Record summary: Structure probing data (DMS and 2A3) for a 177-nucleotide construct. For 2A3 the reverse transcriptase was SuperScript II with manganese. Values cover nucleotides 27 to 126. The data come from the RNA Mapping Database (RMDB), library OK2TRN.
RNA sequence: GGGAACGACUCGAGUAGAGUCGAAAAUUGUGUGACUUUAAGAGGUAUGACUUUGGGUUUGACGCAGAUGGUGACCCGACUUCUGUAAUUAAUAAAGCAGUGUACCACUAUGGGCAGUGCAAAUGGGCAAUCUCCAGAAGUUCGCUUCUGGAGAUUGAAAAGAAACAACAACAACAAC
Reactivity to DMS in 0.01 (KOAc 150mM, MgCl2 10mM, bicine 150mM(pH8.5), 24C), signal-to-noise 3, nucleotides 027 to 126: u010u000g040u000g020u010g010a090c030u000u000u000a050a060g000a090g020g000u010a030u010g020a060c080u000u000u000g010g000g000u000u000u020g020a110c160g010c050a020g000a040u000g010g010u010g010a140c000c020c020g020a070c050u010u010c030u000g010u000a080a120u010u020a050a100u000a050a090a100g020c010a050g010u000g000u000a080c020c010a180c220u000a090u010g000g000g000c020a030g010u000g010c020a020a080a060u010g000g010g020
Reactivity to 2A3 in 0.01 (KOAc 150mM, MgCl2 10mM, bicine 150mM(pH8.5), 24C), signal-to-noise 2, nucleotides 027 to 126: u110u080g000u000g040u040g040a020c030u140u080u050a080a080g040a040g020g110u150a100u140g050a040c040u030u130u070g030g000g010u060u070u140g020a030c020g000c020a010g010a060u080g000g080u040g010a080c000c000c030g020a030c020u000u030c000u010g050u050a100a110u190u070a060a140u110a160a150a090g040c010a030g030u000g000u100a300c000c000a040c030u090a150u220g020g000g000c030a040g000u000g040c000a050a000a120u060g000g000g040
The 2A3 profile rests on 1,084 reads.